[RMDB]
RNA sequence: GGGAACGACUCGAGUAGAGUCGAAAAUGGCUUUCCAAGGUACCAGUAGGACUUUAACUCAACAGUCCUCAGCGGCUACGUCUGACGAUCUUCAAAAGAUAUUAUUUAGCCCUGAAGCCAUUAAGAAAAUGGCUACUGAGUGUGACCUAGGCCGGCAAGCCACUUUUACAUUCGUGUAAAAGUGGCUAAAAGAAACAACAACAACAAC
Reactivity to DMS in 0.01 (KOAc 150mM, MgCl2 10mM, bicine 150mM(pH8.5), 24C), signal-to-noise 1, nucleotides 027 to 156: u000g030g020c100u000u020u000c000c000a110a190g030g030u000a020c050c000a050g060u000a010g040g020a010c040u020u000u020a090a120c130u000c120a110a160c190a060g000u000c000c030u000c020a090g030c090g100g040c010u010a060c200g010u020c060u000g020a190c080g030a110u000c120u020u000c180a080a110a180a110g030a020u010a050u000u020a090u040u000u000a010g010c010c000c000u010g000a050a070g020c020c030a030u010u000a080a300g020a070a090a040a050u000g000g040c000u000a040c020u000g010a110g030u000g000u000g030a160c020c020u000a210g000g020c000c010g030g000c080a150
Reactivity to 2A3 in 0.01 (KOAc 150mM, MgCl2 10mM, bicine 150mM(pH8.5), 24C), signal-to-noise 2, nucleotides 027 to 156: u060g030g000c020u030u050u060c050c010a030a000g000g000u010a030c000c000a000g060u010a000g000g020a010c000u060u050u150a160a090c130u160c200a050a070c030a070g020u000c000c030u000c010a040g000c080g060g000c000u030a030c080g120u060c110u070g120a070c100g070a060u050c040u220u050c100a070a080a120a000g020a020u050a040u170u070a060u070u130u070a000g010c010c020c010u030g020a040a000g000c000c020a000u040u060a110a120g080a090a140a000a000u010g000g010c020u000a020c000u020g030a080g240u070g080u120g030a000c010c000u000a000g000g000c000c000g030g000c020a000
Chemical mapping of a 207-nucleotide RNA with DMS and 2A3. The DMS profile rests on 1,693 reads. Values cover nucleotides 27 to 156.